[RMDB]
RNA sequence: GGGAACGACUCGAGUAGAGUCGAAAACACUUGGAGUUCGCUCCAAGUGAAACCAUUGCCGAUUGGCAAUAAUACCGCAGGCGGUAAAGCGGAACAAUUAAGAAAGCGAAGACUUCGGUCUUCGCAAGAUUGUAUACGACUUCGGUCGUAUACAAUCAAAAGAAACAACAACAACAAC
Reactivity to DMS in 0.01 (KOAc 150mM, MgCl2 10mM, bicine 150mM(pH8.5), 24C), signal-to-noise 3, nucleotides 027 to 126: c010a000c000u020u010g000g000a040g030u000u010c230g010c020u000c010c000a010a010g000u000g000a030a120a170c010c000a060u000u000g010c000c020g020a220u000u020g010g010c000a010a020u000a090a120u020a100c020c000g000c020a100g020g010c060g000g010u000a050a090a100g010c010g010g000a230a100c210a050a060u000u010a080a100g000a080a130a150g010c000g010a000a000g000a010c000u000u010c140g020g030u000c000u000u000c000g020c000a000a000
Reactivity to 2A3 in 0.01 (KOAc 150mM, MgCl2 10mM, bicine 150mM(pH8.5), 24C), signal-to-noise 6, nucleotides 027 to 126: c000a000c000u000u000g000g000a000g020u060u060c110g130c090u000c000c000a000a010g000u000g000a020a010a010c010c010a020u010u020g020c010c060g300a300u200u300g010g000c000a000a000u090a050a020u070a040c010c010g020c050a050g130g050c100g070g040u130a130a060a010g010c020g010g030a050a060c040a050a030u230u260a160a080g100a210a080a020g020c010g000a000a000g000a000c000u030u090c230g040g010u000c000u000u000c000g020c000a000a000
The record gives the reactivity of an RNA of 177 nucleotides to DMS and 2A3. Conditions: 150 mM KOAc, 10 mM MgCl2 and 150 mM bicine (pH 8.5), 24 C. Reactivities are given for positions 27 through 126. For DMS the reverse transcriptase was MarathonRT. 2A3 adducts were read by reverse transcription with SuperScript II with manganese.